[RMDB]
RNA sequence: GGGAACGACUCGAGUAGAGUCGAAAAGACUACGGGUUCGCCCGUAGUCACUUACCGAGAAUGCGACUCGGUAUAUUACGCAAACCCUUGGAAACAAGGGAAUCACCAGUUCCUUCGGGAACUGGAAGACAUGCUCUAGAUUCGUCUAGAGCAUGUCAAAAGAAACAACAACAACAAC
Reactivity to 2A3 in 0.01 (KOAc 150mM, MgCl2 10mM, bicine 150mM(pH8.5), 24C), signal-to-noise 3, nucleotides 027 to 126: g010a000c000u000a000c000g030g000g020u020u070c210g090c030c000c000g000u000a000g000u000c000a000c000u010u020a010c000c010g000a000g030a090a150u260g120c150g120a070c040u010c000g000g000u000a000u010a000u000u050a040c050g010c050a050a100a270c000c000c000u000u020g030g020a040a040a030c000a000a000g010g000g040a000a030u040c040a020c010c000a000g000u000u000c000c000u010u090c200g040g000g000a000a000c000u000g000g000a000a000
Reactivity to DMS in 0.01 (KOAc 150mM, MgCl2 10mM, bicine 150mM(pH8.5), 24C), signal-to-noise 3, nucleotides 027 to 126: g000a010c000u000a000c000g000g010g020u000u000c280g040c010c000c000g030u000a000g010u000c000a060c110u000u000a060c000c000g000a010g000a130a150u000g030c190g010a090c000u010c010g000g000u000a010u010a030u000u000a110c180g020c120a100a080a120c000c010c000u000u000g010g010a120a140a240c010a000a000g010g010g000a050a040u000c190a200c000c000a000g010u000u000c000c000u010u000c150g030g000g010a000a000c000u000g000g010a050a060

An RNA of 177 nucleotides, treated with 2A3 and DMS and read out base by base. Values are in units of 0.01, from 0 to 300, in steps of 10. It was measured as part of the RMDB library M2PK50. In probing experiments dimethyl sulfate is read out at A N1 and C N3, which are open when not base-paired. 2A3 adducts were read by reverse transcription with SuperScript II with manganese. The DMS profile rests on 2,465 reads.